[RMDB]
RNA sequence: GGGAACGACUCGAGUAGAGUCGAAAAAGGGGGUAGCUUUCCUCGUAAAUCCAGCUGCAAAACUCUAGUUGCCAACGACGACAACUACGCUCUGGCCGCUUAAGGCCUAAGCCUCGAAACCGCUUGUGUCCAUGCUCGCGGUGUAGAGUCACUAUCAUCUAGAUAGUUUCUUCGGAAACUAUCUAGAAAAAGAAACAACAACAACAAC
Reactivity to DMS in 0.01 (KOAc 150mM, MgCl2 10mM, bicine 150mM(pH8.5), 24C), signal-to-noise 3, nucleotides 027 to 156: a120g020g010g010g020g020u000a050g030c090u000u000u010c010c010u000c040g000u000a060a080a100u010c030c040a060g010c010u000g010c020a100a100a080a090c050u010c010u000a050g010u000u010g010c000c030a080a120c230g000a150c020g000a020c010a020a020c010u000a030c070g010c000u000c020u010g010g030c020c020g050c270u000u010a100a110g020g010c030c020u000a010a030g010c030c010u000c020g010a140a220a080c020c000g010c000u000u010g010u000g010u010c150c150a180u010g000c020u000c100g010c020g010g030u000g000u000a160g000a060g020u000c050a100c030u000a100u000c050a290
Reactivity to 2A3 in 0.01 (KOAc 150mM, MgCl2 10mM, bicine 150mM(pH8.5), 24C), signal-to-noise 4, nucleotides 027 to 156: a000g020g010g010g000g010u020a030g020c030u070u080u050c020c010u050c030g070u050a020a050a030u040c040c020a040g000c040u090g000c040a090a050a090a180c040u050c020u100a020g020u040u030g020c020c040a100a070c110g100a030c040g040a040c020a050a030c050u110a070c050g030c070u010c040u050g000g000c000c000g050c070u230u220a190a040g000g000c010c000u020a030a030g010c000c000u020c010g070a090a010a010c000c000g000c000u010u010g010u010g050u120c090c040a090u250g020c000u000c030g010c000g000g000u000g010u020a010g000a000g010u010c010a000c050u110a080u180c030a040
An RNA of 207 nucleotides, treated with DMS and 2A3 and read out base by base. The 2A3 profile rests on 2,642 reads. Conditions: 150 mM KOAc, 10 mM MgCl2 and 150 mM bicine (pH 8.5), 24 C. Values cover nucleotides 27 to 156.